[RMDB]
RNA sequence: GGGAACGACUCGAGUAGAGUCGAAAAGUUCCCUCUUAGCGUGGAGGAUUAACUACGCUCGUUCCCCAUAUCGGUGUGGGCGCACCGGAUUUAUAAAUCAAAGUCCUUUAGGGAACGGAAAGGAACAAAAAUCCAUGGGAGUUCGCUCCCAUGGAAAGAUAAAUUCAUAGUUCGCUAUGAAUUUAUCAAAAGAAACAACAACAACAAC
Reactivity to 2A3 in 0.01 (KOAc 150mM, MgCl2 10mM, bicine 150mM(pH8.5), 24C), signal-to-noise 2, nucleotides 027 to 156: g010u000u020c000c000c000u000c010u010u040a020g000c000g010u010g030g010a060g020g040a070u170u150a090a080c010u010a000c010g010c000u010c010g000u000u000c010c000c020c020a030u090a040u110c010g010g000u000g000u010g000g000g000c050g000c000a000c000c020g000g000a000u020u300u000a190u130a100a030a010u070c120a010a000a040g010u000c010c000u020u020u080a030g000g000g010a010a010c020g010g010a090a070a030g070g010a030a020c060a060a150a040a000a000u050c000c000a010u010g010g000g000a000g030u090u140c130g080c090u010c000c000c010a000u000g000g020a000a000a000
Reactivity to DMS in 0.01 (KOAc 150mM, MgCl2 10mM, bicine 150mM(pH8.5), 24C), signal-to-noise 3, nucleotides 027 to 156: g000u000u000c020c000c000u000c040u000u000a040g020c020g100u010g000g010a140g000g020a190u000u000a090a180c010u000a010c000g020c030u000c000g000u000u000c010c000c010c050a240u000a110u000c020g020g040u000g030u000g030g000g050c060g000c000a020c000c010g040g010a150u010u000u000a080u000a090a050a100u010c090a060a060a070g020u000c020c030u010u010u000a090g020g000g010a040a060c020g020g000a040a050a120g000g000a060a140c040a030a140a130a090a190u000c010c000a020u000g030g000g010a060g020u000u000c300g030c010u000c000c010c000a010u000g000g000a000a010a050